[RMDB]
RNA sequence: GGGAACGACUCGAGUAGAGUCGAAAAUGCUAGCUUUGCCCAAGCUGGCUCUGAACACAUGAUGCCCACUAAGACAUAACUCUCAAGUUGGCAUCUGUCCAGCGUGUUGGAGCGAGGUCAGGAAGGCAGGGCAAUCCCCCUUUUCCCUCCCAAGGGCUAGGCAAUUAAUCUUCGGAUUAAUUGCCUAAAAAGAAACAACAACAACAAC
Reactivity to DMS in 0.01 (KOAc 150mM, MgCl2 10mM, bicine 150mM(pH8.5), 24C), signal-to-noise 2, nucleotides 027 to 156: u010g030c010u020a160g000c000u000u000u000g030c000c020c010a180a210g040c000u000g020g000c010u000c050u000g010a090a060c020a100c100a160u000g020a040u000g010c000c000c010a050c020u010a130a000g000a070c010a110u000a200a110c100u010c020u000c020a010a080g010u000u010g000g020c020a080u010c040u000g020u000c020c060a080g020c100g000u010g020u000u010g000g000a130g010c040g010a140g060g000u000c010a070g000g010a190a070g040g030c030a100g020g010g020c030a110a100u010c020c020c010c050c020u000u010u000u010c030c010c020u020c030c030c040a080a190g000g010g010c060
Reactivity to 2A3 in 0.01 (KOAc 150mM, MgCl2 10mM, bicine 150mM(pH8.5), 24C), signal-to-noise 2, nucleotides 027 to 156: u090g010c010u010a060g030c000u000u040u140g010c000c000c010a040a040g030c010u040g080g000c010u010c040u040g250a070a010c060a010c010a110u150g000a000u000g010c000c000c000a000c000u000a020a020g010a010c040a190u170a190a120c040u030c000u020c130a090a000g010u020u020g010g000c010a030u000c010u020g040u030c030c080a100g040c140g100u040g030u020u050g030g000a040g020c090g060a030g000g060u110c060a020g060g020a050a020g020g000c060a030g050g000g020c070a090a280u260c000c000c000c000c010u060u000u040u040c000c000c000u020c030c010c010a010a040g000g010g030c030
An RNA of 207 nucleotides, treated with DMS and 2A3 and read out base by base.
Reactivities are given for positions 27 through 156.
The RNA was probed in 150 mM KOAc, 10 mM MgCl2 and 150 mM bicine (pH 8.5) at 24 C.
The 2A3 profile rests on 1,147 reads.